[RMDB]
RNA sequence: GGGAACGACUCGAGUAGAGUCGAAAAACGUGGGCUUGUAAUCCAAGUGGAGACAUCAAAGUGGUUGAAUAUUGGGCUUUACCAGAAGGUUGGGCUUGGUGGGCUUAGUUCUGGCCUGCCCUGUCCAAGCACAGAGUAGGAUCACGAGGCCCAAAUGCAUGCAUAACUUGUUCGCAAGUUAUGCAUGAAAAGAAACAACAACAACAAC
Reactivity to 2A3 in 0.01 (KOAc 150mM, MgCl2 10mM, bicine 150mM(pH8.5), 24C), signal-to-noise 4, nucleotides 027 to 156: a010c070g000u070g010g030g020c050u040u050g040u090a070a050u070c030c030a100a040g060u070g090g040a050g000a030c030a060u070c050a080a070a070g060u060g090g030u050u080g040a110a050u080a180u140u080g040g000g010c010u030u050u050a030c010c020a010g050a110a050g080g040u010u010g010g000g000c000u010u010g010g000u010g030g000g000c010u040u080a030g050u150u110c070u100g020g000c010c000u010g000c000c000c010u010g000u000c000c000a010a000g030c020a030c030a060g080a020g080u150a050g020g030a040u050c020a010c120g020a010g030g000c000c010c040a020a010a000u050g000
Reactivity to DMS in 0.01 (KOAc 150mM, MgCl2 10mM, bicine 150mM(pH8.5), 24C), signal-to-noise 1, nucleotides 027 to 156: a090c060g030u000g000g000g000c010u040u000g010u000a080a070u000c030c040a080a110g020u010g060g000a120g010a080c050a090u020c080a060a110a100g010u000g030g000u010u000g020a090a160u010a080u000u000g000g020g030c030u000u010u000a050c000c020a140g000a160a100g020g020u000u000g020g020g000c030u000u000g020g000u000g000g000g000c000u000u000a080g010u010u000c150u000g020g030c010c000u020g000c000c000c010u000g000u000c000c000a030a080g030c040a080c050a090g010a060g020u000a060g010g000a090u010c080a030c060g000a110g020g000c010c020c000a030a000a120u000g010
Structure probing data (2A3 and DMS) for a 207-nucleotide construct. The DMS profile rests on 4,060 reads. For 2A3 the reverse transcriptase was SuperScript II with manganese.